Conditions: 150 mM KOAc, 10 mM MgCl2 and 150 mM bicine (pH 8.5), 24 C. The record gives the reactivity of an RNA of 177 nucleotides to DMS and 2A3. For DMS the reverse transcriptase was MarathonRT. The 2A3 profile rests on 20,851 reads. The DMS profile rests on 12,559 reads.
RNA sequence: GGGAACGACUCGAGUAGAGUCGAAAAGAUAUGGAGCCGUAACAUCUUGUCAGACCUAUGAUCGGAAACGAUCAAAUGGUCUUGGAUUUAGUGGGCUCCUAAGUCAAAACGCACGUUCGCGUGCGAAGACUAGAUGAAAGUUCGCUUUCAUCUAGUCAAAAGAAACAACAACAACAAC
Reactivity to DMS in 0.01 (KOAc 150mM, MgCl2 10mM, bicine 150mM(pH8.5), 24C), signal-to-noise 8, nucleotides 027 to 126: g000a040u010a300u000g020g000a000g030c010c010g020u000a060a100c170a020u000c010u000u010g010u010c120a040g010a010c000c000u000a300u000g000a010u010c000g010g010a100a070a160c000g000a000u000c000a000a060a090u010g000g000u000c010u000u010g010g000a010u000u000u010a040g030u000g020g000g010c000u000c000c000u010a000a060g000u000c030a080a060a110a140c020g000c000a010c010g020u000u010c190g010c000g000u000g000c010g010a060a080
Reactivity to 2A3 in 0.01 (KOAc 150mM, MgCl2 10mM, bicine 150mM(pH8.5), 24C), signal-to-noise 6, nucleotides 027 to 126: g020a000u050a030u150g000g000a000g000c010c010g060u060a050a030c020a230u070c020u050u130g170u200c090a010g000a010c000c000u030a060u040g010a000u000c010g030g000a090a030a030c010g000a010u010c000a010a050a040u170g000g000u000c000u000u010g000g000a000u030u070u070a080g040u140g120g000g000c000u000c010c000u010a050a010g040u000c020a020a040a070a120c020g010c000a000c000g000u050u080c300g010c000g100u010g000c000g010a050a020